[RMDB]
RNA sequence: GGGAACGACUCGAGUAGAGUCGAAAAAAAAAGAUAUGGACUCUGAACUACCUCAACGAAUUCGUUGAAAUAACCUCGGAAACGAGGUUAUGGAGAAUGAGUUGAGGCAGAGUCCUAAGUCAAAAAACGAUAUCUAGAUCUUCGGAUCUAGAUAUCGAAAAGAAACAACAACAACAAC
Reactivity to DMS in 0.01 (KOAc 150mM, MgCl2 10mM, bicine 150mM(pH8.5), 24C), signal-to-noise 1, nucleotides 027 to 126: a030a040a100a170a090g030a020u000a200u010g000g000a060c000u020c000u000g010a020a020c040u010a300c030c000u000c000a000a010c000g000a200a030u000u000c000g000u020u010g010a030a100a010u000a010a000c000c020u000c000g010g000a020a020a040c000g000a010g000g010u000u000a010u000g020g040a010g010a020a000u000g010a250g000u000u000g000a010g000g000c010a000g030a000g000u000c000c000u000a000a060g010u010c010a000a070a030a050a140a120
Description: Chemical mapping of a 177-nucleotide RNA with DMS. For DMS, 1,227 sequencing reads were counted. Conditions: 150 mM KOAc, 10 mM MgCl2 and 150 mM bicine (pH 8.5), 24 C. The data come from the RNA Mapping Database (RMDB), library TTRDES.